[RMDB]
RNA sequence: GGGAACGACUCGAGUAGAGUCGAAAAGAUAUGGAGACAUCACAGAGAAACUCGGAAACGAGAAUUUCGACGAAGUGAGUCUCCUAAGUCAAACUCCCAGAACACCCUUCGGGGUGUUCUGGGAGAACGUAUAUAGCUAGUUCGCUAGCUAUAUACGAAAAGAAACAACAACAACAAC
Reactivity to DMS in 0.01 (KOAc 150mM, MgCl2 10mM, bicine 150mM(pH8.5), 24C), signal-to-noise 3, nucleotides 027 to 126: g010a020u000a300u000g000g000a010g010a020c010a080u000c010a020c020a100g000a160g020a010a030a160c010u000c000g010g000a080a080a210c010g000a010g000a060a230u010u000u000c000g010a180c200g000a140a110g010u000g010a040g010u000c000u000c000c000u000a020a050g010u000c020a120a100a150c000u000c000c000c000a030g000a020a020c000a020c000c030c000u000u010c170g040g010g040g000u000g010u000u000c010u000g000g000g000a000g000a000a030
Reactivity to 2A3 in 0.01 (KOAc 150mM, MgCl2 10mM, bicine 150mM(pH8.5), 24C), signal-to-noise 2, nucleotides 027 to 126: g020a010u060a030u160g000g010a020g020a020c050a300u020c020a000c010a010g090a000g030a060a030a010c010u000c030g040g040a090a090a070c020g030a020g030a300a300u020u060u030c180g160a300c060g050a190a040g010u020g000a000g000u010c000u000c000c000u030a080a000g040u010c020a060a050a120c010u000c020c000c020a000g010a000a000c020a000c040c040c040u100u140c300g100g050g070g000u010g000u030u000c000u010g020g010g000a000g000a000a000